[RMDB]
Annotation: Chemical mapping of a 207-nucleotide RNA with DMS and 2A3. DMS adducts were read by reverse transcription with MarathonRT. It was measured as part of the RMDB library OK3TST. Conditions: 150 mM KOAc, 10 mM MgCl2 and 150 mM bicine (pH 8.5), 24 C. For DMS, 2,054 sequencing reads were counted. Values cover nucleotides 27 to 156. For 2A3 the reverse transcriptase was SuperScript II with manganese.
RNA sequence: GGGAACGACUCGAGUAGAGUCGAAAAUUGCCACACGGUUGAUGAAAUCAUCGCCGGGAAGCGCAAAAGCACGAUCGUAAACGUUGCGCCAGGUUCGACUAAGACGGAAGCGUUUUCCAUCCACCUUGCGCCGUAUGCAUACCUGAAAUGCAGGAAGGUUCCACUAGGUAUUCGUACCUAGUGGAACAAAAGAAACAACAACAACAAC
Reactivity to DMS in 0.01 (KOAc 150mM, MgCl2 10mM, bicine 150mM(pH8.5), 24C), signal-to-noise 1, nucleotides 027 to 156: u000u000g010c020c040a280c070a090c000g070g010u010u000g070a030u010g030a190a090a190u020c030a030u030c020g020c020c000g000g010g060a080a090g060c020g040c040a100a050a080a120g040c030a190c100g010a140u010c090g020u010a020a110a080c030g000u000u020g000c050g060c000c040a020g030g000u000u000c080g010a160c110u000a110a120g000a050c020g000g000a080a090g000c040g000u000u000u000u000c010c040a130u000c050c030a030c000c040u000u000g000c000g000c000c010g010u000a000u000g020c010a170u000a040c020c060u030g010a060a070a110u010g010c040a030g000g000a100a180g000
Reactivity to 2A3 in 0.01 (KOAc 150mM, MgCl2 10mM, bicine 150mM(pH8.5), 24C), signal-to-noise 3, nucleotides 027 to 156: u020u040g010c020c010a060c000a010c040g040g060u300u300g110a010u020g040a170a200a050u300c000a000u000c000g010c010c040g000g000g040a070a050g030c070g000c110a040a060a040a030g090c050a040c120g030a100u180c120g070u110a070a120a010c020g050u070u070g020c010g000c020c010a000g020g040u070u120c020g030a050c060u080a030a080g080a040c040g000g020a040a030g100c040g050u110u000u000u000c020c010a040u000c000c020a030c000c010u010u010g010c020g000c050c030g030u050a040u100g070c020a020u040a140c030c000u040g040a100a140a050u140g050c000a000g050g030a040a040g150